[RMDB]
RNA sequence: GGGAACGACUCGAGUAGAGUCGAAAAAUUUAUGUUAUCGGUGGACGAGAUGGAUCAAAUUAUCUAAACACUGUAGAAAGUUGGAAACCUAUGGAUAACAAGUGGCGAUACGAAACACCGAUAAAUUAUAAAAGAAGCAGUGCUUCCGCUGUUUCAGUAUAUUUAUGAUUUUCGAAUCAUAAAUAUAAAAAGAAACAACAACAACAAC
Reactivity to DMS in 0.01 (KOAc 150mM, MgCl2 10mM, bicine 150mM(pH8.5), 24C), signal-to-noise 2, nucleotides 027 to 156: a060u000u000u010a020u000g000u010u000a000u010c010g020g060u010g010g010a200c060g010a290g010a110u010g010g010a110u000c040a050a090a180u000u000a050u000c020u000a120a070a100c020a030c030u010g000u010a180g020a120a060a150g010u000u010g010g000a130a110a140c050c030u000a160u010g000g010a080u000a030a070c040a070a150g010u010g000g020c130g010a180u020a060c020g000a140a090a040c040a010c000c000g000a030u000a020a010a050u000u000a080u000a030a030a040a160g020a100a060g010c020a060g010u000g000c020u010u000c160c050g030c020u000g010u000u000u000c000a140g020
Reactivity to 2A3 in 0.01 (KOAc 150mM, MgCl2 10mM, bicine 150mM(pH8.5), 24C), signal-to-noise 1, nucleotides 027 to 156: a000u140u170u030a140u190g050u000u000a000u000c000g010g000u010g000g100a050c030g020a040g010a190u090g040g030a020u100c030a030a100a080u110u070a040u000c010u020a030a110a000c040a010c060u000g020u050a020g030a060a180a070g110u180u180g120g070a140a050a000c020c000u010a090u030g000g060a020u060a230a040c070a010a090g040u040g020g040c040g040a020u020a110c020g060a020a170a000c000a000c010c000g000a000u020a000a000a000u200u160a080u000a020a050a020a070g000a000a000g000c000a000g010u000g050c170u050u000c040c000g030c010u000g000u010u000u000c000a010g000
Description: Structure probing data (DMS and 2A3) for a 207-nucleotide construct. DMS adducts were read by reverse transcription with MarathonRT. Source: RMDB library OK3TST, as collected in RNAgym. For DMS, 4,197 sequencing reads were counted.